[RMDB]
RNA sequence: GGGAACGACUCGAGUAGAGUCGAAAACGCCGGCCCCCGCCGGCGCCGACGGUGCCUCCAAGGUCGACCCUCCAGCUCGUCUCUCCCCGUCGUCACCUACCUCUCUCUGUCACUCGCUCGCUCACUCCUCCCUGUCUUUCUUCGGAAAGACAGGGAGAAAAGAAACAACAACAACAAC
Reactivity to 2A3 in 0.01 (KOAc 150mM, MgCl2 10mM, bicine 150mM(pH8.5), 24C), signal-to-noise 1, nucleotides 027 to 126: c030g050c000c000g030g000c040c040c000c000c180g060c000c010g000g010c020g020c000c000g060a100c060g040g130u100g060c010c010u000c030c010a060a050g050g030u050c020g060a070c010c000c000u000c010c020a030g000c010u080c020g050u020c060u000c000u000c010c020c000c000g030u010c000g010u010c020a020c040c040u050a040c010c000u020c000u000c000u010c030u030g040u070c000a000c050u020c020g010c000u010c010g000c000u010c010a040c070u080c010